[RMDB]
RNA sequence: GGGAACGACUCGAGUAGAGUCGAAAAGGUAUAUAUGCUCCGGGUAGUUACGGCCACACAAGUGUGUUAGGUCAAACACAAGAGUUUUCGAAGUGGUUCUGGGAAAACCACAAAGAUAUAGAUUUAAUCAGUAAUAAACUAGGCAUAAGCAUAAAGAGCCUGGCUACACAUUCGUGUGUAGCCAGGCAAAAGAAACAACAACAACAAC
Reactivity to 2A3 in 0.01 (KOAc 150mM, MgCl2 10mM, bicine 150mM(pH8.5), 24C), signal-to-noise 1, nucleotides 027 to 156: g080g020u070a080u020a020u030a000u300g070c010u020c010c030g020g020g020u030a060g010u050u100a030c090g030g010c020c000a030c000a020c020a100a280g000u040g010u000g020u300u050a060g000g000u010c100a000a040a000c050a000c000a000a020g030a070g040u050u000u050u000c020g010a120a000g000u020g060g030u030u020c000u030g030g030g020a000a000a030a030c030c000a030c000a020a140a000g010a010u060a000u070a030g010a010u020u060u120a080a030u040c020a020g040u020a050a030u010a160a080a040c090u150a010g040g000c010a010u210a070a070g000c000a020u290a290a100a020g130a020

The record gives the reactivity of an RNA of 207 nucleotides to 2A3. For 2A3, 435 sequencing reads were counted. Source: RMDB library OK3TST, as collected in RNAgym. The RNA was probed in 150 mM KOAc, 10 mM MgCl2 and 150 mM bicine (pH 8.5) at 24 C. For 2A3 the reverse transcriptase was SuperScript II with manganese.